[RMDB]
An RNA of 207 nucleotides, treated with 2A3 and read out base by base.

RNA sequence: GGGAACGACUCGAGUAGAGUCGAAAAGGGGUCGAGUCAAUGACGGCCCUGGGAGCUUUGAUCAUACUGAAGCCUCCACGGUAUGGGAGCUCCCAGGCUAAGACAGACUCGACGGAGGCACCCAAAAGCAUGAAAGAGAUUCGUCUCUUUCAUGCAAACCAACUCUUUUCUUCGGAAAAGAGUUGGUAAAAGAAACAACAACAACAAC
Reactivity to 2A3 in 0.01 (KOAc 150mM, MgCl2 10mM, bicine 150mM(pH8.5), 24C), signal-to-noise 3, nucleotides 027 to 156: g040g000g090g030u000c000g010a010g000u010c070a110a300u210g070a090c040g040g000c070c090c040u000g000g010g000a000g000c020u300u300u020g010a010u010c000a000u000a000c000u050g030a140a030g030c000c000u000c000c010a000c010g010g000u000a000u000g000g000g000a020g000c000u000c030c000c000a000g020g000c010u050a130a030g050a150c040a040g000a000c000u000c000g000a010c010g000g000a010g010g010c000a050c010c000c000a060a120a000a000g010c000a000u000g000a000a000a000g010a010g010a010u040u110c220g190u010c090u000c000u000u000u000c010a000u000g000c000a000a000